An RNA of 177 nucleotides, treated with DMS and 2A3 and read out base by base. For DMS, 5,147 sequencing reads were counted. For DMS the reverse transcriptase was MarathonRT. The reactions ran in a buffer of 150 mM KOAc, 10 mM MgCl2 and 150 mM bicine (pH 8.5), at 24 C. Source: RMDB library OK2TST, as collected in RNAgym. For 2A3 the reverse transcriptase was SuperScript II with manganese.

[RMDB]
RNA sequence: GGGAACGACUCGAGUAGAGUCGAAAACAUUGGCUCCAGGACUGAUGAGAGGAGGGUAGCCUCAAUGGCAUACAUCAGGGGUGCCUCGAGUAGCUUAAAAGCAGUUCUUAGACUGGCGGGAGUGUACCUAGACGUGGUAAUUCGUUACCACGUCUAGAAAAGAAACAACAACAACAAC
Reactivity to DMS in 0.01 (KOAc 150mM, MgCl2 10mM, bicine 150mM(pH8.5), 24C), signal-to-noise 5, nucleotides 027 to 126: c100a130u000u000g010g000c020u000c030c060a100g000g010a120c040u010g000a060u010g010a200g010a100g010g000a080g010g000g020u010a070g010c020c000u010c100a120a050u010g010g000c100a090u010a110c070a060u010c120a060g010g000g000g010u000g000c030c010u000c100g010a050g000u010a090g010c040u000u000a020a050a090a080g010c030a070g010u020u000c050u000u000a080g000a100c050u000g000g010c080g010g000g000a050g010u000g010u010a070c180
Reactivity to 2A3 in 0.01 (KOAc 150mM, MgCl2 10mM, bicine 150mM(pH8.5), 24C), signal-to-noise 3, nucleotides 027 to 126: c030a050u030u140g080g000c010u000c010c040a040g060g070a100c040u050g040a030u080g040a090g020a030g180g050a030g050g020g020u080a050g030c000c010u010c010a030a060u120g020g000c060a080u110a150c010a040u110c050a060g000g010g030g030u040g000c000c000u010c010g030a050g040u060a030g030c040u090u110a030a100a010a020g010c000a010g010u070u000c000u040u080a070g000a120c040u010g030g040c000g050g000g000a020g040u080g030u070a050c020